[RMDB]
RNA sequence: GGGAACGACUCGAGUAGAGUCGAAAACCUGUAAAAAAAGUAGCCUUUGGCGGUGAUCAAGUACAUGAGGUUGCUGCUGUAAGAAGUGUUACUGUCGAGUACAACAUUCAUGCUGUAUUAGACACACGAACAGGUGGCUUCGGCCACCUGAAAAGAAACAACAACAACAAC
Reactivity to 2A3 in 0.01 (KOAc 150mM, MgCl2 10mM, bicine 150mM(pH8.5), 24C), signal-to-noise 3, nucleotides 027 to 129: c000c000u000g130u130a130a130a000a000a000a000a000g000u020a000g030c020c000u060u010u100g000g000c010g000g010u030g010a030u010c070a100a090g090u180a240c040a120u130g170a050g060g000u030u010g000c010u020g010c010u030g040u150a050a050g080a060a010g080u090g010u180u030a000c020u020g000u020c010g000a010g010u020a000c000a030a000c010a040u080u300c050a000u190g000c000u000g010u000a020u000u010a000g020a000c020a000c000a000c010g040a100a000
Reactivity to DMS in 0.01 (KOAc 150mM, MgCl2 10mM, bicine 150mM(pH8.5), 24C), signal-to-noise 3, nucleotides 027 to 129: c040c000u050g020u000a040a000a130a090a020a050a050g000u000a040g020c020c030u030u000u070g000g030c070g000g000u030g000a000u010c050a040a100g060u050a150c300a120u070g030a210g030g040u040u010g030c000u020g000c010u000g010u040a040a170g020a020a070g060u000g000u050u020a050c120u000g000u000c020g020a090g030u030a040c020a010a090c040a080u000u010c280a070u050g020c080u010g020u000a020u040u000a150g000a030c040a140c190a000c090g010a000a000